[RMDB]
Structure probing data (2A3 and DMS) for a 177-nucleotide construct. The reactions ran in a buffer of 150 mM KOAc, 10 mM MgCl2 and 150 mM bicine (pH 8.5), at 24 C. Values are in units of 0.01, from 0 to 300, in steps of 10. For 2A3 the reverse transcriptase was SuperScript II with manganese. The data come from the RNA Mapping Database (RMDB), library OK1LIB.
RNA sequence: GGGAACGACUCGAGUAGAGUCGAAAACAUAGGCAGCACACGGCAAAACUCCAACAGGUUAUCAAGAGCACGCACAUGGGGAUUACUCUUUGAGUCGAUUGCUGCGACCGACACCUCUGCGGCAUAGAAUGGGAGCAGUAUUCGUACUGCUCCCAUUAAAAGAAACAACAACAACAAC
Reactivity to 2A3 in 0.01 (KOAc 150mM, MgCl2 10mM, bicine 150mM(pH8.5), 24C), signal-to-noise 4, nucleotides 027 to 126: c040a040u160a060g090g000c020a020g000c030a000c000a000c050g030g030c010a000a030a030a080c030u020c020c010a040a030c030a130g060g020u090u100a060u200c060a070a030g020a010g050c040a020c040g090c000a020c040a140u130g020g000g000g050a060u050u130a070c010u020c020u070u060u170g010a010g020u020c010g060a100u030u130g020c030u050g000c000g010a030c000c000g030a010c020a020c040c010u040c030u090g020c000g040g010c020a040u070a090g160
Reactivity to DMS in 0.01 (KOAc 150mM, MgCl2 10mM, bicine 150mM(pH8.5), 24C), signal-to-noise 4, nucleotides 027 to 126: c090a100u030a080g020g030c010a050g000c020a060c100a110c040g000g010c050a060a070a110a050c050u000c030c010a120a080c220a060g000g000u000u020a190u020c110a080a090g000a060g000c100a030c070g000c040a040c110a060u010g000g000g000g000a100u000u010a040c050u000c020u010u000u040g010a090g000u010c030g000a080u000u010g010c000u010g000c040g000a060c070c030g000a080c070a050c040c010u000c040u000g010c000g000g000c050a070u020a040g000